[RMDB]
RNA sequence: GGGAACGACUCGAGUAGAGUCGAAAAAGUCAGGUUCGCUAUGGUGCAACUCUUUAAGGCAAUAACGAACUAAUUCUAAGCAAGUAAUGGAGAAAUGCCAGGGUCACUAUCUAGCCAUAAUAGUGCUGUAAGUGACUUAGAUUCGUCUAAGUCACAAGUAAGUAUCACACUUCGGUGUGAUACUUACAAAAGAAACAACAACAACAAC
Reactivity to 2A3 in 0.01 (KOAc 150mM, MgCl2 10mM, bicine 150mM(pH8.5), 24C), signal-to-noise 6, nucleotides 027 to 156: a000g120u090c040a020g000g050u020u050c010g030c030u050a030u070g060g050u060g040c050a080a120c040u040c030u100u280u190a090a030g030g010c020a040a060u070a130a040c080g060a020a010c040u050a010a040u110u060c060u080a060a030g060c050a040a050g030u150a110a050u160g050g010a060g030a060a100a020u070g020c040c010a050g010g020g020u040c010a010c040u040a030u120c020u020a030g040c020c000a020u040a170a060u050a140g080u060g040c040u020g060u120a160a070g000u010g010a000c000u000u000a000g000a000u020u030c110g020u010c130u000a000a000g000u000c000a000c000a010a000
Reactivity to DMS in 0.01 (KOAc 150mM, MgCl2 10mM, bicine 150mM(pH8.5), 24C), signal-to-noise 2, nucleotides 027 to 156: a050g020u000c020a140g000g010u010u000c010g040c020u000a060u010g000g000u000g010c030a040a090c100u000c120u000u000u010a080a130g000g020c030a090a050u000a020a070c040g010a060a040c030u000a020a130u010u000c070u010a090a140g000c070a050a100g030u000a070a100u000g000g010a070g020a080a090a100u000g000c000c030a060g010g010g010u000c030a040c050u000a050u000c070u010a070g000c040c030a070u000a060a100u000a050g040u000g020c030u000g010u010a030a160g030u000g010a030c000u000u000a000g000a070u010u010c300g050u000c000u000a010a000g020u000c000a020c000a040a120

Annotation: Structure probing data (2A3 and DMS) for a 207-nucleotide construct. High 2A3 reactivity points to a flexible backbone, as in loops and unpaired stretches. Values cover nucleotides 27 to 156. It was measured as part of the RMDB library M2RFPK. The RNA was probed in 150 mM KOAc, 10 mM MgCl2 and 150 mM bicine (pH 8.5) at 24 C.